[RMDB]
RNA sequence: GGGAACGACUCGAGUAGAGUCGAAAACAACGCCGAACCUAAAAGGCUUUUUUCGGCGAUGCCCAACUCGACUUUCUGCCCCGGCGCCAGCGGCUCCGCGCUUGGCACAACAAUGGUAUGCGUGGUUCAGAUCUCAAAUAUUCGUAUUUGAGAUCUGAAAAGAAACAACAACAACAAC
Reactivity to DMS in 0.01 (KOAc 150mM, MgCl2 10mM, bicine 150mM(pH8.5), 24C), signal-to-noise 3, nucleotides 027 to 126: c140a080a100c030g030c010c000g000a040a120c130c020u020a040a050a110a150g000g000c300u000u000u000u010u000u000c000g000g000c000g000a080u000g030c000c010c000a110a100c050u000c040g000a040c040u000u010u000c020u020g030c040c020c020c020g000g020c070g010c020c010a040g010c060g010g000c070u010c030c070g030c040g010c050u000u000g030g000c060a060c050a070a100c160a080a070u030g000g010u000a060u000g010c070g040u000g000g020u010u000
Reactivity to 2A3 in 0.01 (KOAc 150mM, MgCl2 10mM, bicine 150mM(pH8.5), 24C), signal-to-noise 9, nucleotides 027 to 126: c040a030a020c010g010c000c000g010a040a060c020c030u180a130a120a060a080g070g000c110u150u050u010u000u010u010c010g010g000c010g010a030u100g040c000c010c000a020a050c020u030c020g090a070c030u050u080u010c010u060g020c010c000c010c010g030g000c010g010c010c010a030g020c030g050g000c030u020c020c010g030c000g000c010u070u090g030g030c030a010c010a110a050c040a070a140u140g050g010u100a050u080g020c030g030u050g000g000u030u000
Structure probing data (DMS and 2A3) for a 177-nucleotide construct. The reactions ran in a buffer of 150 mM KOAc, 10 mM MgCl2 and 150 mM bicine (pH 8.5), at 24 C.